This 207-nucleotide RNA was probed chemically with 2A3 and DMS. For DMS, 2,243 sequencing reads were counted. For 2A3 the reverse transcriptase was SuperScript II with manganese. For DMS the reverse transcriptase was MarathonRT.

[RMDB]
RNA sequence: GGGAACGACUCGAGUAGAGUCGAAAAUAUCAAGCUGAUCCGUUCUUCCUGUCCAUUUAGGAUCAGCGAGGGACAGGAUGACCUCUCCGAGAGGAGUAAAAUGGUCUGUGCGACGACGUAUGACCGGACCGCUUAGUCGUCGCUUUGGUCCGGGAGACGCACCCUAUUUAUUCGUAAAUAGGGUGCGAAAAGAAACAACAACAACAAC
Reactivity to 2A3 in 0.01 (KOAc 150mM, MgCl2 10mM, bicine 150mM(pH8.5), 24C), signal-to-noise 2, nucleotides 027 to 156: u230a040u090c060a160a000g040c010u010g040a020u000c000c000g070u100u050c040u020u000c020c000u020g040u010c000c050a160u180u170u220a060g010g020a070u050c040a000g000c000g000a070g030g000g000a040c050a030g000g070a100u040g060a000c030c000u000c000u030c010c010g050a080g010a040g120g010a030g040u140a000a050a060a090u140g000g000u000c030u040g140u030g000c000g010a000c000g000a010c060g150u250a090u120g090a170c020c030g040g020a010c020c000g060c070u010u060a030g010u040c010g000u030c000g040c000u060u180u020g010g000u000c000c000g000g010g000a100g010a000
Reactivity to DMS in 0.01 (KOAc 150mM, MgCl2 10mM, bicine 150mM(pH8.5), 24C), signal-to-noise 1, nucleotides 027 to 156: u010a040u010c030a050a210g010c010u000g020a020u010c010c000g030u000u020c130u000u000c030c000u000g000u000c020c050a140u010u000u060a110g040g000a080u000c020a040g020c090g010a040g010g010g020a080c010a120g000g040a080u000g020a060c040c010u000c020u000c010c000g020a300g050a300g020g000a080g010u020a050a040a090a100u010g010g000u000c030u000g010u000g060c030g010a070c050g000a020c020g050u000a120u000g000a130c020c020g000g000a090c010c050g020c130u010u000a060g000u010c010g000u000c010g020c030u000u000u000g000g040u000c000c010g000g020g010a130g000a210